[RMDB]
RNA sequence: GGGAACGACUCGAGUAGAGUCGAAAAGAUAAUUCCGGCAAGACCGCUCUCCAUUGGGCAGCGGCGGUUAACAAUACCGAAGCGGUGAACAUUCUGCUAAUGCAUCAUGCCAAUCGCGAUGCCCAGGAUCGAGGGAGGAAUUCGUUCCUCCCUCGAUAAAAGAAACAACAACAACAAC
Reactivity to DMS in 0.01 (KOAc 150mM, MgCl2 10mM, bicine 150mM(pH8.5), 24C), signal-to-noise 2, nucleotides 027 to 126: g000a110u010a100a180u000u010c000c030g000g050c070a080a150g030a140c010c010g000c020u000c030u020c070c080a190u010u010g060g010g030c070a050g020c290g010g000c010g010g020u000u000a070a080c260a070a090u000a080c030c060g010a080a110g000c080g010g020u000g020a070a170c030a030u000u010c100u000g020c020u040a100a140u010g020c000a030u010c050a030u000g000c020c070a130a040u000c040g030c020g000a050u000g010c000c020c030a060g000g000
Reactivity to 2A3 in 0.01 (KOAc 150mM, MgCl2 10mM, bicine 150mM(pH8.5), 24C), signal-to-noise 1, nucleotides 027 to 126: g100a040u160a080a110u190u050c030c000g050g050c060a040a080g070a110c000c010g010c030u000c020u000c040c000a140u070u210g050g000g000c040a040g020c010g040g030c000g000g000u020u020a090a040c020a040a290u080a100c010c010g060a080a020g000c030g010g010u010g030a020a000c000a050u060u000c020u040g040c000u180a150a040u230g010c000a020u010c020a040u070g030c010c000a010a050u010c000g000c000g030a030u060g000c020c000c000a020g040g030